[RMDB]
RNA sequence: GGGAACGACUCGAGUAGAGUCGAAAAAAAAAAAGAUAUGGAGCGUUUGUCAGUCCGAGGUACCGUUUGACGUCGGAAACGACCGAGGUACCGAGGACUUGGAUUUAACGCUCCUAAGUCAAAAAAACAUUAUUUACUGGUUCGCCAGUAAAUAAUGAAAAGAAACAACAACAACAAC
Reactivity to DMS in 0.01 (KOAc 150mM, MgCl2 10mM, bicine 150mM(pH8.5), 24C), signal-to-noise 2, nucleotides 027 to 126: a000a000a080a080a070a130a140g020a020u000a300u000g000g000a020g000c010g020u000u000u000g000u000c020a010g000u010c000c000g010a300g000g000u000a010c000c000g000u010u000u010g030a160c300g000u000c010g000g000a110a070a090c020g010a000c000c000g000a060g000g000u010a010c000c010g010a210g000g010a000c020u000u010g000g000a020u000u010u000a000a040c010g010c010u000c000c000u010a020a020g000u010c030a000a020a100a080a060a040a130
The data come from the RNA Mapping Database (RMDB), library TTRDEL. This 177-nucleotide RNA was probed chemically with DMS. Reactivities are given for positions 27 through 126.